Structure probing data (2A3) for a 207-nucleotide construct. Conditions: 150 mM KOAc, 10 mM MgCl2 and 150 mM bicine (pH 8.5), 24 C. The 2A3 profile rests on 680 reads. Reactivities are given for positions 27 through 156. The data come from the RNA Mapping Database (RMDB), library OK3TST.
RNA sequence: GGGAACGACUCGAGUAGAGUCGAAAAGCCAACACGAACGCUGUCUUCGAAACUUCUGUCGGCGUCAUCCAUCAAAUCAACGACAGCACGCAAUUUGUUAUCCACGCUGAGCGCGGUCAUCCGAAGGUAGUUGACGACGAUGUUGGGACGCUGGUCACUGACCACAGAAGUUCGCUUCUGUGGUCAGAAAAGAAACAACAACAACAAC
Reactivity to 2A3 in 0.01 (KOAc 150mM, MgCl2 10mM, bicine 150mM(pH8.5), 24C), signal-to-noise 2, nucleotides 027 to 156: g070c000c000a010a010c110a010c000g010a040a000c030g000c020u030g000u070c030u000u000c050g090a140a100a150c010u160u130c080u220g100u090c030g000g000c000g010u020c020a160u050c250c020a010u020c010a000a090a000u000c000a000a100c020g000a000c000a020g030c050a040c000g070c030a090a230u030u020u150g210u180u090a040u070c000c020a060c050g020c000u140g140a190g080c080g020c030g030g060u100c070a120u070c040c030g040a040a020g030g050u130a060g000u050u000g010a020c020g000a010c080g110a080u060g020u100u060g010g020g000a010c030g020c040u030g040g000u020c060a060